Chemical mapping of a 207-nucleotide RNA with 2A3 and DMS.
RNA sequence: GGGAACGACUCGAGUAGAGUCGAAAACAAGUCCAAGGCACGGUGGCUCACGCCUAUAAUCGCAGCACUUUGGGAGGCCAAGACGAGAGAAUUGCUUGAGCCUAGAAAUUGAAGACCAACCUAGGCAACAUAAUUAGAACUGGUUGCUACAAAAAAAUCUAAAAGAAGGGUUCGCCCUUCUUUUAGAAAAAGAAACAACAACAACAAC
Reactivity to 2A3 in 0.01 (KOAc 150mM, MgCl2 10mM, bicine 150mM(pH8.5), 24C), signal-to-noise 2, nucleotides 027 to 156: c050a020a010g030u010c010c010a070a020g020g000c000a020c070g050g000u020g020g020c020u000c070a050c020g010c010c000u100a100u100a110a050u090c060g020c050a010g040c030a020c050u140u030u030g070g040g000a040g040g000c030c020a020a000g000a020c110g000a000g020a000g020a150a150u080u090g010c030u030u030g060a000g000c000c010u040a020g040a060a150a070u120u120g040a070a010g020a040c020c010a010a010c020c010u040a030g030g040c020a000a000c010a010u220a160a070u100u100a020g060a040a070c040u040g020g020u000u000g050c000u040a040c070a010a090a030a000a010a190a010
Reactivity to DMS in 0.01 (KOAc 150mM, MgCl2 10mM, bicine 150mM(pH8.5), 24C), signal-to-noise 1, nucleotides 027 to 156: c040a090a130g000u010c050c050a050a180g000g010c050a020c000g010g000u000g030g000c030u000c110a080c110g020c010c000u000a090u000a040a060u000c040g050c020a050g050c070a060c040u000u000u020g000g020g020a080g010g100c020c010a060a130g000a040c030g000a160g010a010g000a090a070u000u000g020c020u000u020g000a300g010c010c010u000a030g010a060a090a080u010u020g020a010a080g000a060c050c020a070a070c060c000u010a050g000g020c000a040a080c050a090u000a040a150u010u010a140g030a090a080c040u000g030g050u000u030g020c020u000a150c050a000a000a040a070a050a020a290
For DMS the reverse transcriptase was MarathonRT.